[RMDB]
Chemical mapping of a 177-nucleotide RNA with 2A3 and DMS. 2A3 adducts were read by reverse transcription with SuperScript II with manganese. Reactivities are given for positions 27 through 126. The data come from the RNA Mapping Database (RMDB), library OK2TRN.
RNA sequence: GGGAACGACUCGAGUAGAGUCGAAAAGUCUUGGUAAUCGAUUUUCGCCUGAUUGCCUUAUGGGUACAGCCAAGAUAGCCUUAUUUGUCCCUCAGGUGAGGACCUCGCCAAUUGUGAACCCAUUGGCGACGCGUUGAAAAUUCGUUUUCAACGCGUCAAAAGAAACAACAACAACAAC
Reactivity to 2A3 in 0.01 (KOAc 150mM, MgCl2 10mM, bicine 150mM(pH8.5), 24C), signal-to-noise 3, nucleotides 027 to 126: g010u010c010u020u010g000g020u100a140a140u140c090g110a140u040u030u070u180c040g030c010c030u060g020a090u030u200g020c000c000u010u120a270u200g040g000g020u050a070c050a030g000c000c000a030a000g010a030u050a050g060c000c030u070u120a220u050u130u090g050u010c000c020c010u030c010a020g000g000u030g020a020g010g020a030c000c020u020c070g020c000c020a040a030u050u020g040u080g100a070a060c000c000c000a010u000u000g010g020c030
Reactivity to DMS in 0.01 (KOAc 150mM, MgCl2 10mM, bicine 150mM(pH8.5), 24C), signal-to-noise 4, nucleotides 027 to 126: g020u000c020u000u020g000g020u000a100a110u000c070g010a140u010u000u020u000c050g000c070c050u000g010a070u000u010g000c010c010u000u000a070u010g020g000g030u000a100c300a160g020c010c010a010a020g000a040u010a120g000c080c070u010u010a110u000u010u000g000u000c010c020c000u000c010a030g010g010u000g010a040g000g000a070c080c030u000c030g020c010c010a010a030u000u010g020u010g000a130a200c160c100c110a080u000u000g000g000c010